RNA sequence: GGGAACGACUCGAGUAGAGUCGAAAAGGCGAUUUGGCUAACAGCGAUGAACUUACCCGAGAGGCUGACCAAAUCCUGAUGCUGUAUCGGGAUGAGGUCUAUAACCCUGACUCGCCGGACCGUGGCCUAGCUGAAAUCCUGAUUGAGAAGAAUAGGCACCAUUACUGUUGUUCGCAACAGUAAUGGUAAAAGAAACAACAACAACAAC
Reactivity to DMS in 0.01 (KOAc 150mM, MgCl2 10mM, bicine 150mM(pH8.5), 24C), signal-to-noise 4, nucleotides 027 to 156: g020g020c030g010a180u010u000u000g010g010c030u000a090a230c070a110g010c040g040a120u000g000a140a080c040u020u000a100c040c030c040g020a120g010a200g020g010c040u010g010a050c000c010a030a270a050u000c000c010u000g000a100u000g010c130u010g000u010a100u010c000g040g010g010a020u000g010a300g000g020u000c010u000a090u010a060a090c040c020c000u000g010a150c040u000c050g020c010c010g010g000a060c030c040g020u000g020g000c020c020u010a090g010c030u000g000a070a040a160u000c040c020u000g010a190u000u000g000a160g010a100a110g010a060a120u010a070g010g030c100
Reactivity to 2A3 in 0.01 (KOAc 150mM, MgCl2 10mM, bicine 150mM(pH8.5), 24C), signal-to-noise 6, nucleotides 027 to 156: g020g010c050g020a060u100u090u200g020g010c050u090a160a030c040a080g040c030g100a120u130g070a130a090c050u080u080a070c050c010c040g030a030g000a010g010g050c100u080g000a010c000c010a000a020a030u000c010c000u010g010a020u020g050c260u210g090u300a020u010c000g010g010g000a000u010g010a010g000g000u000c010u000a010u010a010a020c010c000c000u010g060a060c010u010c040g030c010c000g000g020a060c050c030g030u050g000g000c030c000u010a010g000c030u030g030a070a040a030u070c010c000u050g060a160u100u180g050a120g020a140a020g050a060a060u110a120g070g010c010
Source information:
Conditions: 150 mM KOAc, 10 mM MgCl2 and 150 mM bicine (pH 8.5), 24 C. This 207-nucleotide RNA was probed chemically with DMS and 2A3. For DMS, 7,289 sequencing reads were counted. The 2A3 profile rests on 4,470 reads. For 2A3 the reverse transcriptase was SuperScript II with manganese. Reactivities are given for positions 27 through 156.